[RMDB]
RNA sequence: GGGAACGACUCGAGUAGAGUCGAAAAACGGCAGACGCCCGAGGCCUUAUUCAGUCGUCUCGGGCUCAUGCCAUCGUCGCCCUGACGCGCCACACUGAGAAGUGCGUCAUCAUUGACGCACCGGGCCCCGAUUUAGCACUUUCGAGUGCUAAAUCGGAAAAGAAACAACAACAACAAC
Reactivity to DMS in 0.01 (KOAc 150mM, MgCl2 10mM, bicine 150mM(pH8.5), 24C), signal-to-noise 1, nucleotides 027 to 126: a030c250g020g000c030a050g000a300c300g000c000c000c010g050a020g020g040c010c030u000u000a130u000u000c300a140g020u000c270g000u000c000u000c020g000g010g000c020u010c040a040u000g000c020c000a050u000c040g010u000c070g000c070c020c000u000g020a040c060g020c200g020c020c020a110c160a050c110u010g010a120g070a210a070g020u010g000c020g010u000c010a000u020c300a170u000u000g010a000c000g010c010a000c000c050g010g020g000c140c090